[RMDB]
RNA sequence: GGGAACGACUCGAGUAGAGUCGAAAAUCCUAAGUCAGGUCAAUGCGAGGUUACAGACAUGCCAAUCGGAAACGAUUGGCAACAGCUGUAACUCCCCACCGCAUUGCCCGGCCUGAUAUGGAAAAGGUGUGUUAAGACUUCGGUCUUAACACACCAAGUUCAUCGAGAUGUUCGCAUCUCGAUGAACAAAAGAAACAACAACAACAAC
Reactivity to 2A3 in 0.01 (KOAc 150mM, MgCl2 10mM, bicine 150mM(pH8.5), 24C), signal-to-noise 1, nucleotides 027 to 156: u000c000c000u000a090a000g000u010c050a050g020g010u020c020a020a000u020g010c000g000a000g000g010u000u000a000c020a000g050a060c030a090u030g000c000c000a000a000u000c010g020g010a080a050a050c010g000a000u000u000g010g030c000a010a010c020a000g000c000u020g000u010a000a000c010u050c020c010c010c000a050c010c000g000c000a010u010u010g010c000c000c030g020g030c000c020u050g000a040u070a110u300g180g060a060a070a040a020g010g000u010g000u000g000u000u000a000a000g000a000c000u010u090c300g030g000u000c020u000u000a010a000c010a000c000a000c010c010a000a000